Notes: The record gives the reactivity of an RNA of 177 nucleotides to 2A3. Source: RMDB library OK1LIB, as collected in RNAgym. Values cover nucleotides 27 to 126. The RNA was probed in 150 mM KOAc, 10 mM MgCl2 and 150 mM bicine (pH 8.5) at 24 C. For 2A3, 656 sequencing reads were counted. For 2A3 the reverse transcriptase was SuperScript II with manganese.

RNA sequence: GGGAACGACUCGAGUAGAGUCGAAAAGCUCGGAGACGAGCAAGGCUGACAAAACAGUGUCCCAACCUCCACGUGGUGUCGGCUGGAUAAUGCUGCAUUAUGUUGCAUUUAUCAACUGGGAAGUAAAGCUACGCAUGCACUUCGGUGCAUGCGUAGCAAAAGAAACAACAACAACAAC
Reactivity to 2A3 in 0.01 (KOAc 150mM, MgCl2 10mM, bicine 150mM(pH8.5), 24C), signal-to-noise 1, nucleotides 027 to 126: g070c000u000c000g000g000a030g000a090c000g000a000g030c000a000a000g040g000c020u020g030a030c030a000a200a140a060c050a030g040u040g020u040c000c000c000a000a000c000c040u070c000c010a000c050g080u100g000g080u040g000u020c000g040g000c000u070g020g020a030u040a010a000u000g000c000u000g000c000a060u040u260a160u300g000u000u010g000c020a000u000u000u170a040u000c000a010a050c010u020g020g050g000a060a000g110u170a080a050a050